Background: Chemical mapping of a 177-nucleotide RNA with DMS and 2A3. For DMS the reverse transcriptase was MarathonRT.
RNA sequence: GGGAACGACUCGAGUAGAGUCGAAAAGAGCGCAUUGUACGCUGGCAAGGAAAUGGCUGUGCUGUUCCAGCCUGAGGGGGCUCGUGAAGUCCUGGAGAGGGCACAGAGCCUUUGUGCCUGAACAGGCCAUUGCAUUAGUCUUCGGACUAAUGCAAUGAAAAGAAACAACAACAACAAC
Reactivity to DMS in 0.01 (KOAc 150mM, MgCl2 10mM, bicine 150mM(pH8.5), 24C), signal-to-noise 9, nucleotides 027 to 126: g010a050g010c020g020c050a140u010u010g010u010a080c040g010c010u000g010g020c100a090a110g010g010a060a100a100u010g010g010c000u000g000u000g000c020u000g000u000u000c010c000a030g000c010c010u010g000a150g010g000g000g000g010c010u000c040g010u000g010a140a060g020u000c000c000u010g010g010a100g010a150g010g000g010c000a050c030a070g000a080g010c070c070u000u010u000g020u000g010c030c030u000g000a040a030c010a010g000g010c280
Reactivity to 2A3 in 0.01 (KOAc 150mM, MgCl2 10mM, bicine 150mM(pH8.5), 24C), signal-to-noise 8, nucleotides 027 to 126: g050a000g000c040g010c090a150u110u240g050u150a050c030g000c040u030g050g020c040a080a070g080g070a090a070a080u150g010g000c020u020g010u040g030c020u020g020u030u020c010c000a000g000c000c010u040g010a090g000g030g000g010g000c000u010c010g060u070g090a100a020g030u010c000c000u010g020g020a140g010a020g020g000g000c020a010c010a020g060a020g040c000c000u020u070u020g020u020g010c000c010u010g000a010a000c000a000g000g000c020
The reactions ran in a buffer of 150 mM KOAc, 10 mM MgCl2 and 150 mM bicine (pH 8.5), at 24 C. For DMS, 55,518 sequencing reads were counted. 2A3 adducts were read by reverse transcription with SuperScript II with manganese.